[RMDB]
RNA sequence: GGGAACGACUCGAGUAGAGUCGAAAAGAAAGAAAGAAAGUCAAUGAUGAUAUAAUUUAUCCCUGUCUUAGCUUUCUGUCAUGCUGAAAAAUCAUGGUAGCCUGUGGUAAGGCUUUUACCUGACAAAUAGCCAACGAACUUUCGAGUUCGUUGGCUAAAAAGAAACAACAACAACAAC
Reactivity to DMS in 0.01 (KOAc 150mM, MgCl2 10mM, bicine 150mM(pH8.5), 24C), signal-to-noise 1, nucleotides 027 to 126: g000a030a020a070g040a020a000a030g010a070a030a010g010u000c120a060a150u000g000a050u000g000a000u070a080u100a230a070u010u000u000a000u000c010c160c000u000g000u000c000u000u000a110g000c030u000u000u000c000u000g000u000c010a030u000g000c130u000g000a080a080a090a300a060u060c030a000u000g020g040u000a020g080c040c030u000g030u030g090g000u060a160a020g000g000c000u000u000u010u020a030c050c040u000g010a030c170a040a120a120
The record gives the reactivity of an RNA of 177 nucleotides to DMS. Source: RMDB library RFM100, as collected in RNAgym.